[RMDB]
RNA sequence: GGGAACGACUCGAGUAGAGUCGAAAAGUCGGUCAUGCCCUGCUGGUAGUGGGCGAACAGUACGUAGCCGCCGGUGGAGAGGUUGGACUCUUCCAUCAGCUUCUGCAGGUGUUCCACCGCCUCGCGGAUUUGCAAUCGCAUUCGUGCGAUUGCAAAUAAAAGAAACAACAACAACAAC
Reactivity to DMS in 0.01 (KOAc 150mM, MgCl2 10mM, bicine 150mM(pH8.5), 24C), signal-to-noise 2, nucleotides 027 to 126: g020u020c050g020g020u000c070a090u020g020c030c040c040u000g020c020u020g000g010u000a060g040u000g000g000g000c090g000a030a060c050a030g000u010a150c180g010u010a110g050c070c080g020c070c050g020g020u000g000g000a060g000a020g000g010u000u010g000g000a180c030u000c020u000u010c000c010a020u010c020a050g000c030u000u010c020u000g000c010a060g000g000u010g000u010u000c060c090a080c070c030g010c030c030u000c200g000c060g000g000
Reactivity to 2A3 in 0.01 (KOAc 150mM, MgCl2 10mM, bicine 150mM(pH8.5), 24C), signal-to-noise 1, nucleotides 027 to 126: g000u000c050g020g010u020c010a040u130g020c040c000c020u000g010c020u090g000g100u060a050g030u090g020g000g010c040g030a050a030c000a020g150u160a020c060g030u040a010g050c020c010g020c050c010g000g000u000g000g040a000g010a020g050g050u220u300g110g050a300c000u000c000u140u000c000c020a020u020c000a000g040c000u030u000c000u020g000c000a020g000g010u060g000u130u030c040c030a020c000c000g050c000c000u020c060g050c020g040g030
Record summary
The record gives the reactivity of an RNA of 177 nucleotides to DMS and 2A3. The reactions ran in a buffer of 150 mM KOAc, 10 mM MgCl2 and 150 mM bicine (pH 8.5), at 24 C. For 2A3, 1,124 sequencing reads were counted. 2A3 adducts were read by reverse transcription with SuperScript II with manganese. Source: RMDB library OK2TST, as collected in RNAgym.